[RMDB]
RNA sequence: GGGAACGACUCGAGUAGAGUCGAAAAGUCAGGAAAAGAAACUCACUCCUGUUUAGGAGCCCCCUAAAUAUGCGGAAUGUGGUACAAAGAGCCCCAGGCUGGUGAUGCCGUUUGGCUGUGUCUCCACCCAAAUCUCAUCUUGAAUUGUAGCUCCCAAUCAUUACUAUGGUUUCGACCAUAGUAAUGAAAAAGAAACAACAACAACAAC
Reactivity to 2A3 in 0.01 (KOAc 150mM, MgCl2 10mM, bicine 150mM(pH8.5), 24C), signal-to-noise 2, nucleotides 027 to 156: g050u030c030a040g090g040a020a060a050a090g090a140a150a070c030u040c030a070c020u020c010c010u060g070u130u100u150a030g030g010a060g000c010c000c000c010c000u020a050a080a020u210a100u140g050c060g050g020a060a030u130g050u060g050g000u050a040c020a020a140a020g100a070g050c000c020c020c010a030g040g000c000u030g000g120u070g040a040u060g000c000c000g000u040u100u100g030g020c000u030g020u010g000u050c030u010c040c020a030c020c000c000a010a170a050u010c030u010c010a080u020c030u070u040g010a050a010u040u090g080u100a020g010c010u050c030c020c000a010a080
Reactivity to DMS in 0.01 (KOAc 150mM, MgCl2 10mM, bicine 150mM(pH8.5), 24C), signal-to-noise 1, nucleotides 027 to 156: g000u000c040a070g000g000a080a070a120a090g000a100a040a050c010u000c050a140c020u010c000c010u010g000u000u000u010a030g000g010a050g010c020c040c010c040c040u000a010a070a070u010a040u000g060c090g070g010a050a130u000g000u020g020g000u040a230c050a060a100a190g030a140g000c010c020c050c040a100g010g000c050u000g050g040u000g010a070u000g020c040c020g040u000u000u000g020g030c000u000g050u000g010u010c050u000c020c010a100c040c000c020a020a070a050u000c050u000c040a110u000c020u000u000g030a180a130u000u000g000u010a090g000c020u000c000c000c000a050a300